Overview:
Chemical mapping of a 177-nucleotide RNA with DMS and 2A3.
[RMDB]
RNA sequence: GGGAACGACUCGAGUAGAGUCGAAAAUAGGAGAAUCACUUGAACCUGGGAAGUGGAGGUUGUGGUGAGCCAAGAUCACGCCAUUGCACUCCUGCCUGGGCAAUAAGACUGAAACUCUGUCUUAAAAUCACCCUUUCCUGUUCGCAGGAAAGGGUGAAAAAGAAACAACAACAACAAC
Reactivity to DMS in 0.01 (KOAc 150mM, MgCl2 10mM, bicine 150mM(pH8.5), 24C), signal-to-noise 1, nucleotides 027 to 126: u000a220g000g020a000g000a050a300u000c000a050c010u000u000g000a300a060c010c000u010g010g000g030a050a080g010u000g020g080a060g000g000u000u000g010u000g000g020u000g000a110g050c170c100a050a160g020a200u010c110a090c110g000c010c000a000u000u000g020c030a220c000u000c000c000u000g000c010c030u000g000g010g000c020a010a110u010a030a010g000a120c140u040g000a040a050a280c010u000c010u000g000u000c110u000u020a070a070a080a090
Reactivity to 2A3 in 0.01 (KOAc 150mM, MgCl2 10mM, bicine 150mM(pH8.5), 24C), signal-to-noise 1, nucleotides 027 to 126: u160a040g030g030a050g010a040a000u010c000a000c010u030u030g080a130a120c000c010u000g020g000g000a300a100g300u040g000g010a030g020g050u050u050g020u010g000g060u010g050a010g000c140c060a120a030g070a050u120c070a020c100g000c000c000a010u000u020g000c110a220c300u000c000c000u010g000c000c010u020g000g000g000c000a000a050u140a030a010g070a130c110u020g000a040a040a030c010u010c000u000g040u040c000u030u100a060a110a020a060

The RNA was probed in 150 mM KOAc, 10 mM MgCl2 and 150 mM bicine (pH 8.5) at 24 C. Reactivities are given for positions 27 through 126. 2A3 is a SHAPE reagent: it acylates the 2'-hydroxyl of flexible nucleotides of all four kinds.